[RMDB]
This 177-nucleotide RNA was probed chemically with DMS and 2A3. The DMS profile rests on 1,930 reads. The RNA was probed in 150 mM KOAc, 10 mM MgCl2 and 150 mM bicine (pH 8.5) at 24 C. It was measured as part of the RMDB library M2PK50.
RNA sequence: GGGAACGACUCGAGUAGAGUCGAAAAGGGCGUCAUUUCGAUGACGCCCAUACGUCUACUCCGAUUGGCGAGGACGACGCCGACGGGCGCGUUUGCCAAUCGCACCGUCCAGAUUCGUCUGGACGAACUACAGCUUACGGUUCGCCGUAAGCUGUAGAAAAGAAACAACAACAACAAC
Reactivity to DMS in 0.01 (KOAc 150mM, MgCl2 10mM, bicine 150mM(pH8.5), 24C), signal-to-noise 2, nucleotides 027 to 126: g000g020g000c000g010u000c010a000u000u000u010c170g010a010u000g000a010c000g030c000c000c000a000u000a000c200g000u000c010u000a010c000u000c020c020g010a050u000u000g000g020c000g000a110g000g000a020c020g000a130c000g020c010c000g000a130c300g030g010g010c010g020c000g010u000u000u000g000c020c000a000a000u000c010g000c120a110c140c030g000u000c000c010a000g000a010u010u000c210g000u010c000u010g010g010a010c020g020a010a110
Reactivity to 2A3 in 0.01 (KOAc 150mM, MgCl2 10mM, bicine 150mM(pH8.5), 24C), signal-to-noise 3, nucleotides 027 to 126: g000g000g000c000g010u000c000a010u050u090u190c220g080a010u020g000a000c000g000c000c000c000a010u000a000c000g030u000c000u000a000c000u000c000c020g010a010u000u010g020g020c070g030a090g110g030a060c020g150a200c000g000c010c010g190a300c200g050g050g000c000g020c000g000u000u010u120g000c000c000a000a000u010c000g030c010a060c010c030g010u000c000c000a000g000a030u010u060c140g070u000c070u000g010g000a000c000g000a000a010